Structure probing data (2A3) for a 207-nucleotide construct. The data come from the RNA Mapping Database (RMDB), library OK3TST. Values are in units of 0.01, from 0 to 300, in steps of 10. Reactivities are given for positions 27 through 156.
[RMDB]
RNA sequence: GGGAACGACUCGAGUAGAGUCGAAAACAUCGCGCUGUGCCAGAGCUGCUCGCAGCGGCACCGGGACAACCUCAGCAAGGCCGCAGCCGAGCGCGCGGAGCGUGAAGCCGUUGAGGCGCAGCACGAUCCGCUGUUCGACGUGGACCUGUUCGGAGCCCGGACAUGUUUGGUUCGCCAAACAUGUCCGAAAAGAAACAACAACAACAAC
Reactivity to 2A3 in 0.01 (KOAc 150mM, MgCl2 10mM, bicine 150mM(pH8.5), 24C), signal-to-noise 1, nucleotides 027 to 156: c030a040u020c010g020c000g020c070u080g010u040g020c000c020a040g010a010g140c090u080g010c020u080c000g030c040a060g040c000g000g010c050a040c050c020g070g000g040a040c050a160a180c040c000u010c000a050g070c140a130a130g000g000c000c020g040c030a040g000c120c020g000a000g000c020g000c020g000c000g050g000a030g010c040g120u100g090a020a010g010c000c000g060u060u250g140a080g060g000c000g000c070a010g010c000a000c000g010a010u010c040c000g030c000u030g020u040u050c080g070a070c020g020u030g030g030a010c000c020u000g000u060u040c030g000g120a100g000c110c040